[RMDB]
RNA sequence: GGGAACGACUCGAGUAGAGUCGAAAAAUGGAAAAGCAGCCGUUCCUGCAGCUCUUAGCCAAGAUACUACUUCAGGAGGAAAAUUAACCUUUCCGUUAGUUAAUAUAGCAACAAGUCUAUUAUUCGUCAAAGAAUUCAUGAAACUAACAAAAGCAGCCCAUCCAUAGCCAUUCGUGGCUAUGGAUGGAAAAGAAACAACAACAACAAC
Reactivity to 2A3 in 0.01 (KOAc 150mM, MgCl2 10mM, bicine 150mM(pH8.5), 24C), signal-to-noise 1, nucleotides 027 to 156: a000u010g000g020a000a070a000a100g020c000a000g010c010c010g080u080u020c000c000u060g050c040a010g000c000u000c000u070u150a060g070c000c010a070a000g020a050u120a040c010u000a000c000u050u050c020a000g070g020a000g040g000a020a070a000a050u140u100a170a110c000c000u060u090u000c000c040g050u060u060a010g000u000u000a210a000u080a100u000a120g050c010a030a180c040a260a000g000u060c010u000a020u100u000a000u030u060c010g030u020c070a070a050a110g050a060a140u060u200c050a060u180g070a080a010a010c020u040a000a000c010a020a070a070a000g000c010a020g070c000
Conditions: 150 mM KOAc, 10 mM MgCl2 and 150 mM bicine (pH 8.5), 24 C.
An RNA of 207 nucleotides, treated with 2A3 and read out base by base.
Source: RMDB library OK3TST, as collected in RNAgym.
Reactivities are given for positions 27 through 156.